Structure probing data (2A3 and DMS) for a 177-nucleotide construct. It was measured as part of the RMDB library TTRDES. Conditions: 150 mM KOAc, 10 mM MgCl2 and 150 mM bicine (pH 8.5), 24 C. For 2A3, 2,165 sequencing reads were counted. For 2A3 the reverse transcriptase was SuperScript II with manganese.
RNA sequence: GGGAACGACUCGAGUAGAGUCGAAAAAAGAUAUGGAUGUAAGGGAGAAUUACUGUCCGACGAUCGCUAGUCGGAAACGACUAGCGGGAGGACAGACUAAUUCAUCGAUCUUACAUCCUAAGUCAAAGGAUGGAAUCUAGUUCGCUAGAUUCCAUCCAAAAGAAACAACAACAACAAC
Reactivity to 2A3 in 0.01 (KOAc 150mM, MgCl2 10mM, bicine 150mM(pH8.5), 24C), signal-to-noise 1, nucleotides 027 to 126: a010a000g110a040u130a090u190g010g010a000u010g000u000a000a000g040g040g020a090g000a020a000u030u010a020c000u000g000u050c010c010g100a300c050g010a220u000c010g030c020u000a000g020u020c000g000g070a110a020a050c010g010a000c010u000a000g000c000g000g020g000a000g000g000a020c000a010g000a000c020u070a000a000u020u040c030a170u300c150g030a030u010c000u000u010a000c000a000u010c000c020u000a030a020g040u030c040a040a020a140
Reactivity to DMS in 0.01 (KOAc 150mM, MgCl2 10mM, bicine 150mM(pH8.5), 24C), signal-to-noise 1, nucleotides 027 to 126: a050a040g010a040u010a300u000g000g000a010u010g030u000a000a000g000g000g000a080g030a010a000u000u010a010c070u010g010u000c020c010g000a160c300g010a010u010c030g000c000u000a000g000u000c020g000g010a100a040a110c000g030a010c000u000a000g010c000g010g000g000a030g050g000a000c010a020g000a060c180u000a000a020u000u010c050a300u000c150g000a080u010c010u000u010a000c010a010u000c000c000u000a020a080g000u000c050a060a090a130